[RMDB]
RNA sequence: GGGAACGACUCGAGUAGAGUCGAAAACAUGGCACGAGAAUCGCUUGAACCCGGGAGGCAGAGGUUGCAAUGAGCCAAGAUCAUGCCACUGCACUCCAGUCUGGGCAACAGAGCAAGACUCUGUCUCAAAAAUAAAAUAAAAUAACAACACUAAUAGCAACUAUAUCUGCUUCGGCAGAUAUAGUUGAAAAGAAACAACAACAACAAC
Reactivity to DMS in 0.01 (KOAc 150mM, MgCl2 10mM, bicine 150mM(pH8.5), 24C), signal-to-noise 1, nucleotides 027 to 156: c060a150u050g000g110c090a030c060g020a130g060a150a130u000c020g120c000u000u000g010a090a150c120c000c080g000g000g040a000g000g010c060a020g000a070g000g000u010u010g000c050a010a020u000g020a300g040c030c010a000a130g050a080u000c040a020u000g000c020c010a040c040u010g010c020a210c010u010c000c000a110g000u000c010u050g040g010g000c000a040a070c010a110g000a140g000c000a090a020g000a300c000u000c010u010g030u000c010u000c000a030a030a040a110a070u000a050a010a070a150u000a080a050a050a130u010a090a130c040a060a050c060a140c050u010a060a090u000a180g030
Reactivity to 2A3 in 0.01 (KOAc 150mM, MgCl2 10mM, bicine 150mM(pH8.5), 24C), signal-to-noise 3, nucleotides 027 to 156: c020a080u110g040g000c030a010c090g050a070g040a140a090u130c080g030c010u040u070g010a100a090c030c010c000g050g050g000a020g010g010c000a000g000a000g070g020u080u070g020c010a040a070u030g020a010g040c040c030a070a020g030a120u110c050a020u080g020c020c020a040c050u070g000c040a090c190u030c000c030a020g040u010c050u130g010g040g000c040a160a010c010a030g030a010g030c030a050a030g010a140c000u000c000u010g000u010c000u000c010a120a160a010a010a020u130a020a070a020a010u200a050a070a020a010u150a030a020c030a110a000c030a010c160u260a060a130u190a150g050